[RMDB]
RNA sequence: GGGAACGACUCGAGUAGAGUCGAAAAGAUAUGGAAAUAACACGGGAGCAUCUCGGAAACGAGAAUGCGACGAUCGUGCUAUUUCCUAAGUCAAAGUCUUGGUAGUACUUCGGUACUACCAAGACAACAGCUCAUAUACGUUCGCGUAUAUGAGCUGAAAAGAAACAACAACAACAAC
Reactivity to 2A3 in 0.01 (KOAc 150mM, MgCl2 10mM, bicine 150mM(pH8.5), 24C), signal-to-noise 2, nucleotides 027 to 126: g040a010u070a040u150g000g020a030a000a000u010a020a000c000a000c020g090g030g000a010g000c010a000u000c010u020c000g010g060a030a050a030c000g010a010g080a150a190u010g000c030g230a060c010g030a060u090c000g000u000g000c010u010a000u020u000u000c000c010u020a100a020g040u040c070a070a110a020g010u010c000u000u000g000g010u000a010g000u010a000c010u030u080c300g050g010u010a000c000u010a000c010c000a000a000g000a000c000a010a000
Reactivity to DMS in 0.01 (KOAc 150mM, MgCl2 10mM, bicine 150mM(pH8.5), 24C), signal-to-noise 2, nucleotides 027 to 126: g020a030u000a300u000g000g000a000a000a010u000a010a020c000a000c000g010g000g000a090g010c000a020u000c000u020c000g000g010a050a100a160c000g020a010g010a070a020u000g020c000g000a070c200g000a050u010c000g010u000g000c020u010a010u000u010u000c000c000u020a020a100g000u000c010a110a080a130g010u000c000u010u000g000g000u000a010g010u000a010c000u000u000c200g040g010u000a000c000u000a000c000c000a000a000g000a000c000a030a090
Annotation: An RNA of 177 nucleotides, treated with 2A3 and DMS and read out base by base. The DMS profile rests on 2,217 reads. The reactions ran in a buffer of 150 mM KOAc, 10 mM MgCl2 and 150 mM bicine (pH 8.5), at 24 C. 2A3 adducts were read by reverse transcription with SuperScript II with manganese. For 2A3, 4,527 sequencing reads were counted. Source: RMDB library TTRDEL, as collected in RNAgym.